[RMDB]
RNA sequence: GGGAACGACUCGAGUAGAGUCGAAAACGUACCGUACACGUACGAGGCCUGUGGCGCACACAGUACACGAUCCGAUCGAUCUAGAGUGAGCGCGUACGUACCAGACAUCAGUCUAUAGGUACUGGCGGAGUCCUCCUUGGUUCGCCAAGGAGGACUCAAAAGAAACAACAACAACAAC
Reactivity to 2A3 in 0.01 (KOAc 150mM, MgCl2 10mM, bicine 150mM(pH8.5), 24C), signal-to-noise 1, nucleotides 027 to 126: c000g030u010a000c030c030g030u080a040c080a000c100g050u050a010c010g040a050g140g040c030c010u090g020u070g190g000c020g040c010a020c000a000c000a070g090u080a040c090a010c070g000a010u000c040c020g160a260u200c080g010a030u000c020u040a020g030a060g230u030g060a060g000c010g000c010g000u060a070c040g010u020a000c000c000a000g020a030c020a110u290c090a110g010u000c030u080a160u180a080g010g020u010a000c050u080g110g000c070g020
Reactivity to DMS in 0.01 (KOAc 150mM, MgCl2 10mM, bicine 150mM(pH8.5), 24C), signal-to-noise 2, nucleotides 027 to 126: c050g020u000a010c020c090g030u030a040c200a040c260g000u000a090c060g000a110g010g010c000c010u000g030u000g000g020c030g000c080a080c000a000c040a050g010u000a120c170a110c220g000a030u000c000c170g020a120u030c140g010a010u000c000u000a220g000a090g020u010g000a050g000c000g000c040g020u000a000c140g000u000a030c020c050a090g000a010c030a080u030c300a110g000u000c010u000a220u010a160g000g000u000a000c010u000g000g000c170g000

Source: RMDB library OK2TRN, as collected in RNAgym. Structure probing data (2A3 and DMS) for a 177-nucleotide construct. The 2A3 profile rests on 1,426 reads. For DMS, 1,084 sequencing reads were counted.